[RMDB]
RNA sequence: GGGAACGACUCGAGUAGAGUCGAAAAACAUAGGCCAUGCUUACGAGCAUGGCCUAUGACGAAUCUCAAGCAAUCAAGCAUUCUACUUCUAUUGCAACACUGAGGAGCUAACGAGCUCCUCAGUGAAAAAAGAGAGUAAUGUUCGCAUUACUCUCAACUAUAUAUCGAUCUUCGGAUCGAUAUAUAGAAAAGAAACAACAACAACAAC
Reactivity to 2A3 in 0.01 (KOAc 150mM, MgCl2 10mM, bicine 150mM(pH8.5), 24C), signal-to-noise 3, nucleotides 027 to 156: a000c000a000u010a010g000g020c000c000a020u000g010c000u110u120a110c230g070a060g000c000a000u000g010g000c000c000u000a000u000g000a000c010g060a020a060u020c010u010c040a040a000g000c000a000a030u140c010a090a000g000c010a140u270u060c040u130a090c060u090u110c030u110a070u040u020g010c020a080a020c000a010c020u000g000a000g000g000a000g000c010u050a130a120c110g060a060g000c000u000c000c000u000c000a010g000u000g000a000a000a000a000a000a010g010a000g000a000g000u000a000a000u000g040u040u080c150g000c090a000u000u000a000c000u000c000u000c000a000a000
Reactivity to DMS in 0.01 (KOAc 150mM, MgCl2 10mM, bicine 150mM(pH8.5), 24C), signal-to-noise 2, nucleotides 027 to 156: a160c020a010u000a000g010g030c010c000a060u010g000c000u020u000a150c300g040a140g010c000a040u030g020g000c000c020u000a000u000g010a150c040g000a070a140u000c030u000c070a070a110g030c080a120a040u000c120a080a160g030c050a090u000u010c090u010a050c000u010u000c070u000a110u010u010g070c050a080a270c000a000c030u000g000a030g010g000a020g000c000u020a160a220c180g000a240g030c000u000c000c000u010c010a000g010u000g010a000a020a080a090a080a160g000a010g010a040g010u000a020a020u000g010u000u010c230g030c020a030u010u000a020c000u000c000u010c010a010a110